[RMDB]
RNA sequence: GGGAACGACUCGAGUAGAGUCGAAAAGGUUACAAUGCUGAUUAGGUUAAAGAAGAGAAAAAUCCUGCAGGUCAUCGUGAGCGCAGUGGUGCUAAUUUUAUUCUUUUGUUCUGUGCAUAAUGAUGUGACAGAGUUGUUACUUCGGUAACAACUCUGUAAAAGAAACAACAACAACAAC
Reactivity to DMS in 0.01 (KOAc 150mM, MgCl2 10mM, bicine 150mM(pH8.5), 24C), signal-to-noise 1, nucleotides 027 to 126: g000g010u020u030a070c090a090a060u000g020c050u010g030a070u000u010a070g010g000u000u020a050a070a140g010a080a040g010a070g000a020a030a040a070a090u000c040c020u000g010c040a120g000g000u000c030a020u010c050g000u000g000a100g010c050g000c050a040g040u010g000g010u000g000c110u030a030a050u000u000u000u020a110u000u010c040u000u000u000u000g010u010u010c030u000g000u000g020c050a010u020a100a100u000g000a080u010g000u000g030

Structure probing data (DMS) for a 177-nucleotide construct. Conditions: 150 mM KOAc, 10 mM MgCl2 and 150 mM bicine (pH 8.5), 24 C.